Chemical mapping of a 177-nucleotide RNA with DMS and 2A3. Conditions: 150 mM KOAc, 10 mM MgCl2 and 150 mM bicine (pH 8.5), 24 C. DMS adducts were read by reverse transcription with MarathonRT.
RNA sequence: GGGAACGACUCGAGUAGAGUCGAAAAUAGAGUGUCUGCGGCCAGGCCAGAGUGCGUCUCAAGUAACACAGAAAUGUACCUAAUCUUUCGGCAAUUAGAUAAUAGCCGUACACGGCAGUUCACUCCACAUAAACUAGCAUUUCGAUGCUAGUUUAUGAAAAGAAACAACAACAACAAC
Reactivity to DMS in 0.01 (KOAc 150mM, MgCl2 10mM, bicine 150mM(pH8.5), 24C), signal-to-noise 9, nucleotides 027 to 126: u000a100g010a060g020u000g010u000c020u000g010c030g010g030c060c100a090g010g010c070c040a070g010a110g020u000g020c050g000u000c040u000c060a080a100g010u000a070a080c150a100c160a060g000a040a050a070u000g010u000a030c040c030u000a070a060u010c070u000u000u000c040g010g010c050a080a060u000u000a070g010a080u000a080a080u000a120g010c010c020g020u000a080c180a060c080g000g020c010a060g000u000u000c030a030c030u000c020c130a150
Reactivity to 2A3 in 0.01 (KOAc 150mM, MgCl2 10mM, bicine 150mM(pH8.5), 24C), signal-to-noise 9, nucleotides 027 to 126: u150a010g050a000g010u030g010u010c020u020g010c010g060g030c050c030a040g040g020c030c020a030g030a020g080u050g010c030g050u010c000u000c020a040a090g050u080a120a020c040a000c000a080g070a030a060a010u060g020u040a030c000c010u040a060a070u070c040u020u120u050c010g020g010c020a040a100u110u030a110g090a160u130a170a050u050a130g000c000c000g010u010a040c090a010c040g080g000c000a010g000u060u040c020a020c020u000c010c010a040
The DMS profile rests on 16,921 reads.
For 2A3, 20,136 sequencing reads were counted.
Source: RMDB library OK2TST, as collected in RNAgym.